Structure probing data (DMS and 2A3) for a 177-nucleotide construct. For DMS the reverse transcriptase was MarathonRT. The RNA was probed in 150 mM KOAc, 10 mM MgCl2 and 150 mM bicine (pH 8.5) at 24 C. Source: RMDB library OK2TRN, as collected in RNAgym.
RNA sequence: GGGAACGACUCGAGUAGAGUCGAAAAUCAUGAAAGUCACCUGAUCAGAUUCUUUGUAUGCUCUGAAAAUUGCCUUAAUUUUCCAAGUUACUUCGAACACUGGUGUUGAAAUUGUAAGGAAGGCAGGCCGAGUUAUUAAGUUCGCUUAAUAACUCGGAAAAGAAACAACAACAACAAC
Reactivity to DMS in 0.01 (KOAc 150mM, MgCl2 10mM, bicine 150mM(pH8.5), 24C), signal-to-noise 4, nucleotides 027 to 126: u010c050a080u010g000a070a100a120g010u000c050a050c030c020u000g010a080u010c030a050g020a300u000u000c020u000u000u010g010u000a030u010g020c070u000c060u000g000a040a030a040a040u000u000g010c110c140u000u010a050a040u010u010u000u000c020c100a080a040g010u000u000a040c030u000u000c050g000a030a040c080a100c060u010g000g030u000g000u000u010g010a040a060a100u000u000g010u010a060a080g000g000a040a060g010g010c080a060g000g000
Reactivity to 2A3 in 0.01 (KOAc 150mM, MgCl2 10mM, bicine 150mM(pH8.5), 24C), signal-to-noise 2, nucleotides 027 to 126: u110c030a000u070g080a080a120a000g100u060c010a020c040c000u000g060a100u040c010a000g050a160u020u120c030u020u050u060g040u080a050u180g020c010u030c010u100g040a030a040a070a070u050u050g030c000c010u090u100a050a090u040u040u020u000c000c010a010a010g020u000u030a050c010u070u050c040g070a040a000c160a010c130u110g050g040u110g000u020u050g020a120a170a070u040u080g030u070a020a010g070g070a010a020g030g000c030a010g100g000
As a SHAPE reagent, 2A3 marks flexible, mostly unpaired nucleotides at the ribose 2'-OH.